[RMDB]
RNA sequence: GGGAACGACUCGAGUAGAGUCGAAAAUGACGGCAAGUUUCAACCGAACAAGCCGAAGUCUUUGCUUAAAUGCGGAGAUUCAGAGACUAAACGAAGAUGGGGACGCCAAAAUAUAGGCGUCUUUUCUGAUAUAGUCCGACUUAUAGCUGGAAGGCUACGAAUAUCGAAACUUCGGUUUCGAUAUUCGAAAAGAAACAACAACAACAAC
Reactivity to DMS in 0.01 (KOAc 150mM, MgCl2 10mM, bicine 150mM(pH8.5), 24C), signal-to-noise 2, nucleotides 027 to 156: u020g020a240c040g000g000c000a070a300g030u000u000u000c060a090a080c090c040g000a200a040c000a070a300g000c000c000g020a070a080g010u000c000u000u000u000g030c020u000u000a070a130a120u020g000c020g030g000a040g020a090u000u010c030a130g000a220g000a040c030u000a040a110a070c170g000a180a010g000a030u000g010g000g010g000a000c020g000c010c020a120a090a080a210u000a210u000a120g040g020c000g030u000c000u020u000u000u000c000u000g000a240u010a190u000a070g000u000c010c000g010a110c030u000u020a100u000a020g000c020u010g010g030a100a150g000g000c030u000a100
Reactivity to 2A3 in 0.01 (KOAc 150mM, MgCl2 10mM, bicine 150mM(pH8.5), 24C), signal-to-noise 3, nucleotides 027 to 156: u110g030a030c020g000g000c040a060a030g020u000u050u130c070a150a100c070c060g020a020a020c010a030a030g010c000c000g000a040a000g000u000c010u020u030u020g000c020u060u100a100a110a090u220g000c010g040g000a020g010a000u140u050c050a040g090a000g010a060c020u070a070a130a070c090g100a070a030g030a050u150g060g000g000g030a000c000g000c000c010a060a030a240a040u300a040u130a120g000g000c000g010u000c000u000u010u000u000c000u010g010a010u010a000u010a110g040u000c010c000g000a020c020u120u190a030u050a160g000c010u030g100g050a090a040g060g000c000u010a030
Structure probing data (DMS and 2A3) for a 207-nucleotide construct.
The reactions ran in a buffer of 150 mM KOAc, 10 mM MgCl2 and 150 mM bicine (pH 8.5), at 24 C.
For DMS, 2,481 sequencing reads were counted.
For 2A3, 2,215 sequencing reads were counted.